[RMDB]
RNA sequence: GGGAACGACUCGAGUAGAGUCGAAAAGGUAAGGAGCAAAUCUGGAUGCCAGACCCUCUGCUGUGCUUACAGUCACCUGUUCCAUUCUGCAACCCAACUUUUAUUAUCAGAUAAGCUUUUGUACCUGGGAAGGUCUGAAUGAGAGCUCUUCAGUCACCCAUGCUAAUGACUUCGGUCAUUAGCAUGGAAAAGAAACAACAACAACAAC
Reactivity to 2A3 in 0.01 (KOAc 150mM, MgCl2 10mM, bicine 150mM(pH8.5), 24C), signal-to-noise 4, nucleotides 027 to 156: g070g010u080a050a100g010g020a010g000c020a040a080a140u060c030u030g010g030a050u120g030c000c010a010g010a120c050c080c040u030c070u100g050c010u020g060u080g050c010u160u260a020c010a030g010u040c050a060c020c030u020g020u030u000c010c000a020u080u050c020u040g010c010a040a060c000c010c020a020a050c060u060u120u080u100a180u160u040a100u170c050a010g040a120u050a130a060g020c000u100u100u050u060g050u060a060c020c010u050g010g000g130a080a040g080g000u020c020u040g050a050a050u160g020a030g000a010g040c030u000c000u110u040c030a050g040u070c030a050c030
Reactivity to DMS in 0.01 (KOAc 150mM, MgCl2 10mM, bicine 150mM(pH8.5), 24C), signal-to-noise 1, nucleotides 027 to 156: g010g000u000a130a140g020g000a090g020c010a050a090a140u010c030u000g000g000a090u000g020c040c040a080g000a080c040c040c080u000c030u020g010c020u000g000u000g000c080u000u010a130c000a070g040u000c090a100c010c020u000g050u000u000c010c000a140u000u000c010u000g000c110a090a190c020c010c030a050a070c060u010u000u010u020a090u000u000a140u020c030a150g000a070u000a090a150g040c060u000u000u000u010g030u010a070c060c030u000g010g020g000a110a060g040g000u000c050u000g000a070a060u010g020a080g000a070g000c040u010c040u000u000c070a110g000u000c070a070c080
Source: RMDB library OK3TST, as collected in RNAgym. Structure probing data (2A3 and DMS) for a 207-nucleotide construct. The RNA was probed in 150 mM KOAc, 10 mM MgCl2 and 150 mM bicine (pH 8.5) at 24 C. Values cover nucleotides 27 to 156. 2A3 adducts were read by reverse transcription with SuperScript II with manganese.